[RMDB]
RNA sequence: GGGAACGACUCGAGUAGAGUCGAAAAGUAGUGCUCGAGACGGAGGCUGUCUCGCAGAGCUUUUAGAUCUUCUGAUCUUUCCCUCCUCCAUAUCGCUUAUGCGUCAAGCGAUAGACGCAUAAUUAAACUACACUAAACAUUUCGAUGUUUAGUGUAGAAAAGAAACAACAACAACAAC
Reactivity to 2A3 in 0.01 (KOAc 150mM, MgCl2 10mM, bicine 150mM(pH8.5), 24C), signal-to-noise 9, nucleotides 027 to 126: g020u070a010g150u030g140c030u030c070g010a000g000a000c020g070g100a080g300g160c240u180g040u000c010u000c010g010c040a030g020a030g040c000u010u020u010u020a010g000a010u020c020u300u070c180u300g000a010u010c000u010u020u000c010c000c000u010c000c000u000c000c010a090u100a070u090c070g000c080u030u000a000u010g010c000g000u000c030a070a080g160c050g190a070u060a100g000a000c000g000c010a000u010a010a000u050u120a040a010a010
Reactivity to DMS in 0.01 (KOAc 150mM, MgCl2 10mM, bicine 150mM(pH8.5), 24C), signal-to-noise 9, nucleotides 027 to 126: g020u000a090g020u010g010c040u000c040g010a010g010a020c010g010g010a170g020g030c130u010g010u000c000u000c010g020c080a030g020a300g000c000u000u000u000u000a020g000a010u000c000u000u010c290u010g000a010u000c000u000u000u000c000c000c000u000c020c010u000c010c020a100u010a050u000c060g030c240u000u000a010u000g010c010g010u000c000a070a130g010c230g000a120u010a060g000a010c000g010c000a010u000a020a030u010u010a040a070a120
Source: RMDB library M2PK90, as collected in RNAgym. An RNA of 177 nucleotides, treated with 2A3 and DMS and read out base by base. For 2A3, 24,043 sequencing reads were counted. High 2A3 reactivity points to a flexible backbone, as in loops and unpaired stretches. 2A3 adducts were read by reverse transcription with SuperScript II with manganese.